[RMDB]
This 207-nucleotide RNA was probed chemically with 2A3. The 2A3 profile rests on 376 reads. Source: RMDB library ARCHII, as collected in RNAgym.

RNA sequence: GGGAACGACUCGAGUAGAGUCGAAAACAGCUUCGCUGAUCUUAAUGAUCUAAGAGUUGCUGCUUAAUUAGCAAAGUUGUUACCUAAGUACUGGUAACCCGGUGUUCGCGAGCUCCACCAGAGGUUUUCGAAACGCCGUCAUUUAUCUGGUUAGAAUCGUACACAGUUCGUUCGCGAACUGUGUACGAAAAGAAACAACAACAACAAC
Reactivity to 2A3 in 0.01 (KOAc 150mM, MgCl2 10mM, bicine 150mM(pH8.5), 24C), signal-to-noise 1, nucleotides 027 to 156: c000a000g000c000u030u030c030g000c030u040g000a000u000c010u090u300a260a150u290g030a000u020c020u050a160a020g000a030g050u090u040g000c010u030g000c000u180u200a110a140u140u110a100g080c020a040a050a000g060u140u030g000u020u030a000c010c010u080a100a080g150u080a130c150u040g030g030u000a010a010c000c000c000g040g000u010g030u000u040c030g010c000g020a020g040c000u010c000c000a020c010c000a000g010a040g000g020u000u070u010u010c000g010a000a030a130c050g020c000c000g080u060c030a040u070u190u210a110u000c020u000g000g000u010u020a110g030a290a170u030